[RMDB]
RNA sequence: GGGAACGACUCGAGUAGAGUCGAAAAUCAUCACGUUUAACUAGUAAUAGUGACCUUUGAAUAACUCUGUGUUUUCAUUAAAUCGUAGUGUUCAUUUACUUUGUCACUAAUUUCGCAUAACAUAUAUGAAACCAGUAUACUUCGGUAUACUGGUUUCAAAAGAAACAACAACAACAAC
Reactivity to 2A3 in 0.01 (KOAc 150mM, MgCl2 10mM, bicine 150mM(pH8.5), 24C), signal-to-noise 1, nucleotides 027 to 126: u040c010a020u110c020a010c080g030u060u000u090a110a070c070u000a100g070u060a090a090u010a040g010u010g010a010c010c020u000u020u070g020a020a000u000a000a000c000u040c000u010g000u010g010u070u030u040u070c090a130u000u300a030a030a030u030c020g010u010a020g000u000g050u050u010c020a000u030u000u020a040c060u000u050u060g020u000c010a000c000u020a030a150u010u090u090c020g030c070a040u040a110a080c000a060u110a020u010a030u210
Reactivity to DMS in 0.01 (KOAc 150mM, MgCl2 10mM, bicine 150mM(pH8.5), 24C), signal-to-noise 1, nucleotides 027 to 126: u020c050a090u010c090a110c210g010u030u000u000a120a100c130u010a070g010u000a050a070u000a010g020u000g000a000c010c300u010u010u000g010a010a040u000a010a000c030u020c030u040g010u000g000u000u000u000u000c280a150u020u000a020a040a010u010c020g030u000a020g020u000g000u000u000c150a000u000u000u000a070c220u000u000u000g010u000c000a000c000u010a000a070u000u020u000c050g040c190a080u010a020a020c040a060u000a130u010a080u010